[RMDB]
RNA sequence: GGGAACGACUCGAGUAGAGUCGAAAAGAUAUGGAGGGCUCGAUAAGCUGGUAUCGGAAACGAUACCCAGCUUUUGACGAGCCGCUCCUAAGUCAAAUCGGGGUACUACUUCGGUAGUACCCCGAAACCAUAGGUCAUGGUUCGCCAUGACCUAUGGAAAAGAAACAACAACAACAAC
Reactivity to DMS in 0.01 (KOAc 150mM, MgCl2 10mM, bicine 150mM(pH8.5), 24C), signal-to-noise 3, nucleotides 027 to 126: g000a050u000a210u010g010g010a030g010g010g010c000u000c000g020a090u010a020a020g030c000u000g010g010u000a000u000c000g010g000a040a030a110c000g000a010u000a010c220c200c100a010g020c010u000u000u000u000g010a220c060g000a010g000c000c000g010c010u000c000c000u010a000a070g000u010c010a060a100a130u000c000g020g000g010g000u000a000c000u000a010c010u000u030c220g020g010u010a020g010u000a000c000c000c000c000g000a010a010a060
Reactivity to 2A3 in 0.01 (KOAc 150mM, MgCl2 10mM, bicine 150mM(pH8.5), 24C), signal-to-noise 1, nucleotides 027 to 126: g010a010u040a010u070g010g010a000g000g000g000c010u000c020g090a100u080a300a090g010c010u030g020g020u000a010u020c010g000g020a050a010a000c010g000a000u000a010c050c010c010a010g010c000u050u040u080u070g030a020c010g000a000g010c000c010g050c000u000c000c000u010a030a010g050u010c010a010a020a200u040c000g000g020g020g020u040a000c000u010a000c000u040u100c280g080g020u000a000g000u000a000c000c000c000c000g000a010a000a000
Chemical mapping of a 177-nucleotide RNA with DMS and 2A3. In probing experiments dimethyl sulfate is read out at A N1 and C N3, which are open when not base-paired. The RNA was probed in 150 mM KOAc, 10 mM MgCl2 and 150 mM bicine (pH 8.5) at 24 C. 2A3 adducts were read by reverse transcription with SuperScript II with manganese.